This 207-nucleotide RNA was probed chemically with 2A3.
The data come from the RNA Mapping Database (RMDB), library OK3TST.
Conditions: 150 mM KOAc, 10 mM MgCl2 and 150 mM bicine (pH 8.5), 24 C.
Values cover nucleotides 27 to 156.
RNA sequence: GGGAACGACUCGAGUAGAGUCGAAAACAAGUGGAUCUUUCCAAGCGAACAAGACACUAACUGCCACCACAUCGAACUCGGAGACUACAACAACUCUUCACUCAAAAUCGGCGGCAUGCACAUGUAUCCAAAAGCCUUCGAGAAAACAACCCGAAUCCGCGUAUGCGGAGUUCGCUCCGCAUACGCGAAAAGAAACAACAACAACAAC
Reactivity to 2A3 in 0.01 (KOAc 150mM, MgCl2 10mM, bicine 150mM(pH8.5), 24C), signal-to-noise 1, nucleotides 027 to 156: c020a030a100g060u020g040g060a090u020c030u010u110u040c040c050a000a030g020c000g010a040a060c040a090a020g020a060c060a010c030u100a100a000c000u080g040c000c010a010c000c010a050c010a160u160c070g030a040a040c020u020c030g020g000a010g020a020c040u120a030c070a130a000c000a080a040c040u020c030u210u070c070a050c040u160c070a060a030a030a140u030c030g060g000c040g000g000c000a030u060g000c030a060c010a140u160g090u170a090u130c100c000a100a160a000a070g040c000c000u010u030c040g000a060g080a000a140a040a030c020a020a000c000c090c170g010a040a030u240c040